Overview: Chemical mapping of a 207-nucleotide RNA with 2A3. The reactions ran in a buffer of 150 mM KOAc, 10 mM MgCl2 and 150 mM bicine (pH 8.5), at 24 C.
RNA sequence: GGGAACGACUCGAGUAGAGUCGAAAACUGGGAGACUUGAGUGCAGGAGAGGAGAGUGGAAUUCCUAGUGUAGCGGUGAAAUGCGUAGAUAUUAGGAGGAACACCAGUUGCGAAGGCGGCUCUCUGGACUGUAACUGACGCUGAGGCACGAAAGCGAGUCCCAUAAUGCUUUCGAGCAUUAUGGGACAAAAGAAACAACAACAACAAC
Reactivity to 2A3 in 0.01 (KOAc 150mM, MgCl2 10mM, bicine 150mM(pH8.5), 24C), signal-to-noise 1, nucleotides 027 to 156: c010u090g000g100g000a000g040a010c050u090u040g000a060g030u080g070c040a030g030g080a070g000a080g040g060a040g000a000g000u060g030g000a090a110u030u010c000c000u030a030g020u000g060u080a050g070c020g170g000u120g110a110a080a030u180g000c040g070u050a000g020a120u100a070u150u100a010g010g010a020g000g030a040a000c000a020c030c050a010g040u080u020g000c000g030a010a070g000g000c000g000g000c000u000c000u020c000u070g030g040a060c020u100g080u060a130a000c050u080g020a020c050g000c050u000g050a050g000g070c010a000c130g030a080a030a000g020c040g020a040
For 2A3, 631 sequencing reads were counted.